Background: Chemical mapping of a 177-nucleotide RNA with 2A3 and DMS.

[RMDB]
RNA sequence: GGGAACGACUCGAGUAGAGUCGAAAAGGGGCCCCUCGCUCGUAUCUCCGAGAGGAGACGAGAAAGAGGAGGAUCUCCCUUUGCCAUCCGAGGGAACUACGUUCUCCUUCGGAUGCCCAGGUCGGACGUAUUUAAUAGAGUUCGCUCUAUUAAAUACAAAAGAAACAACAACAACAAC
Reactivity to 2A3 in 0.01 (KOAc 150mM, MgCl2 10mM, bicine 150mM(pH8.5), 24C), signal-to-noise 5, nucleotides 027 to 126: g020g000g010g000c020c000c010c000u000c000g040c000u000c010g070u080a170u030c010u000c000c010g040a050g010a040g080g010a000g000a010c010g010a000g000a080a190a020g010a010g030g030a150g020g000a030u020c090u060c010c000c000u020u010u030g040c020c010a000u000c000c000g010a010g020g000g010a030a030c020u160a110c300g120u160u040c050u030c040c000u030u010c000g000g000a000u000g010c010c000c000a040g020g130u060c040g030g030a050c040
Reactivity to DMS in 0.01 (KOAc 150mM, MgCl2 10mM, bicine 150mM(pH8.5), 24C), signal-to-noise 7, nucleotides 027 to 126: g020g010g000g000c010c010c000c000u000c000g000c010u000c000g010u000a120u010c000u000c000c000g010a300g000a300g010g010a010g000a030c000g000a020g010a020a070a120g000a010g000g010a120g030g010a170u010c080u010c000c000c010u000u000u010g000c300c010a000u000c000c010g000a030g010g000g000a030a060c070u010a150c240g000u010u000c130u010c000c010u000u000c010g000g000a010u000g000c020c010c010a150g000g000u000c060g000g000a300c170
High 2A3 reactivity points to a flexible backbone, as in loops and unpaired stretches. Values cover nucleotides 27 to 126. The data come from the RNA Mapping Database (RMDB), library 15KREP. 2A3 adducts were read by reverse transcription with SuperScript II with manganese. DMS (dimethyl sulfate) methylates the pairing face of unpaired adenines and cytosines. The reactions ran in a buffer of 150 mM KOAc, 10 mM MgCl2 and 150 mM bicine (pH 8.5), at 24 C.